[RMDB]
RNA sequence: GGGAACGACUCGAGUAGAGUCGAAAAAUCACCGGUGGAGAACCCCAUACGGCAACGGCGUAGAAGUAAAUGCUAACCAAUCCGUGGUAUCUACGCGACGGAGCAUCCACGGAUAACUCUAACAAGGCUAAGCGUCUCGGUUUCGACCGAGACGCAAACAUGUAAAUUGGUUCGCCAAUUUACAUGUAAAAGAAACAACAACAACAAC
Reactivity to DMS in 0.01 (KOAc 150mM, MgCl2 10mM, bicine 150mM(pH8.5), 24C), signal-to-noise 1, nucleotides 027 to 156: a080u000c000a060c030c010g000g040u000g020g020a140g010a090a100c060c010c000c020a120u000a090c030g010g030c040a110a070c000g000g030c000g000u000a040g020a050a090g030u000a090a090a120u000g010c060u010a110a120c080c030a080a130u010c020c030g000u000g000g010u010a070u000c010u010a020c010g000c030g030a090c020g010g010a190g010c030a090u020c010c010a020c000g000g020a100u000a030a040c130u000c060u020a070a110c060a080a100g020g030c090u000a060a150g010c000g000u010c000u000c000g030g040u000u020u020c300g020a040c000c020g010a010g000a010c000g070c000a000a000
Reactivity to 2A3 in 0.01 (KOAc 150mM, MgCl2 10mM, bicine 150mM(pH8.5), 24C), signal-to-noise 3, nucleotides 027 to 156: a000u050c010a000c020c000g030g000u030g010g070a100g040a130a080c020c000c000c020a020u140a170c010g010g000c070a100a030c060g030g010c000g010u000a010g000a050a010g010u020a020a010a060u070g000c070u120a070a060c050c030a090a050u020c000c000g000u000g000g000u010a010u020c000u010a010c010g040c000g060a040c060g140g020a020g010c000a010u030c000c000a010c010g000g010a000u030a020a010c040u050c030u160a080a090c090a110a050g120g030c060u180a100a130g020c000g020u000c000u010c010g010g020u040u080u090c160g020a030c020c000g000a000g000a000c010g000c000a000a000